[RMDB]
RNA sequence: GGGAACGACUCGAGUAGAGUCGAAAAUUUCCUCCCAGGUGUAGAAUCAAUCUCCAUGUCCUCUCGCCUGGGCCUCUUCGCCGGGGGUCCUCCCUCUUCGUCCUUCUUCUUUCUCAACAUUCCGACGCUCUUGUACAUUGUUCGCAAUGUACAAGAGAAAAGAAACAACAACAACAAC
Reactivity to DMS in 0.01 (KOAc 150mM, MgCl2 10mM, bicine 150mM(pH8.5), 24C), signal-to-noise 2, nucleotides 027 to 126: u010u000u000c000c010u000c010c020c000a010g020g010u000g010u000a030g010a080a090u010c060a070a130u020c070u010c080c110a070u010g010u000c130c070u010c040u000c040g010c020c020u010g000g000g020c060c010u000c040u010u000c120g020c090c080g000g010g000g020g000u010c040c020u010c030c030c010u000c030u000u000c030g010u000c030c020u020u000c020u000u000c030u010u000u000c010u000c030a070a090c190a210u000u000c030c010g020a150c190g000
Reactivity to 2A3 in 0.01 (KOAc 150mM, MgCl2 10mM, bicine 150mM(pH8.5), 24C), signal-to-noise 2, nucleotides 027 to 126: u030u030u010c000c000u070c000c000c000a020g060g000u030g020u120a010g030a050a020u090c030a010a090u040c090u040c130c030a080u080g030u000c020c000u000c010u000c000g000c020c010u010g000g010g040c000c010u050c010u100u060c050g030c030c010g000g000g030g010g010u020c000c010u010c000c010c010u010c000u000u010c010g020u000c020c000u000u050c000u040u020c010u020u060u020c020u010c010a010a110c040a100u070u030c040c020g050a040c050g040
Chemical mapping of a 177-nucleotide RNA with DMS and 2A3. For 2A3, 2,248 sequencing reads were counted.